[RMDB]
RNA sequence: GGGAACGACUCGAGUAGAGUCGAAAAUGCCCCCACAUAGCAGAGUCCGGGACCCCCUCCUAAAAGACCGAGGGGGGGUGCUUGGAGCACGGGGGUCCCAGUGGAUCCGUGGGAUGCUCCUCCCGAUACGUUAGAUAAAGUUCGCUUUAUCUAACGUAAAAGAAACAACAACAACAAC
Reactivity to 2A3 in 0.01 (KOAc 150mM, MgCl2 10mM, bicine 150mM(pH8.5), 24C), signal-to-noise 1, nucleotides 027 to 126: u090g040c000c020c020c040c020a030c020a070u130a010g040c040a020g020a030g170u020c050c000g010g010g020a050c000c010c020c020c000u000c000c000u110a190a160a050a000g030a040c060c060g000a190g000g000g030g000g000g010g010u030g030c020u030u050g030g010a020g000c030a010c020g050g000g020g000g010u000c010c000c000a050g040u150g050g030a010u020c050c050g080u120g030g010g000a000u020g000c010u000c000c010u000c000c000c000g010a000u000
Reactivity to DMS in 0.01 (KOAc 150mM, MgCl2 10mM, bicine 150mM(pH8.5), 24C), signal-to-noise 2, nucleotides 027 to 126: u010g010c040c060c000c030c040a150c140a110u000a080g010c080a140g000a150g030u000c030c000g010g000g000a080c020c010c000c000c010u000c100c010u000a060a070a110a100g000a090c160c230g000a060g020g010g000g020g000g000g010u000g010c030u000u010g010g000a040g010c050a050c050g010g000g000g010g020u000c000c000c100a150g010u000g010g010a040u000c040c020g000u000g010g000g000a180u000g000c020u000c050c010u000c010c000c010g010a230u000